[RMDB]
RNA sequence: GGGAACGACUCGAGUAGAGUCGAAAAUUUGUCGACGGUGCCUACCCGUACUCCGUCAGCCCCGCCAAGUCCGGCAGACGCCAACCGCCGACGGACCAGCGCCACCUGGGCGUUGUACGGCGCGAGCACGAGCUAUCGGAUUCGUCCGAUAGCUCGUAAAAGAAACAACAACAACAAC
Reactivity to DMS in 0.01 (KOAc 150mM, MgCl2 10mM, bicine 150mM(pH8.5), 24C), signal-to-noise 2, nucleotides 027 to 126: u000u000u020g010u010c090g010a000c080g030g000u010g020c070c060u000a080c060c030c020g050u020a060c060u000c030c040g030u000c010a190g030c090c070c020c000g030c100c040a110a170g010u020c010c030g020g000c070a070g010a070c100g000c100c110a120a040c230c000g000c030c010g000a030c040g020g010a040c070c050a030g010c030g020c020c060a100c210c170u020g000g000g000c010g020u010u000g000u000a060c090g010g010c030g030c050g020a120g000c070

Structure probing data (DMS) for a 177-nucleotide construct. For DMS, 1,026 sequencing reads were counted. The data come from the RNA Mapping Database (RMDB), library OK2TRN. Reactivities are given for positions 27 through 126.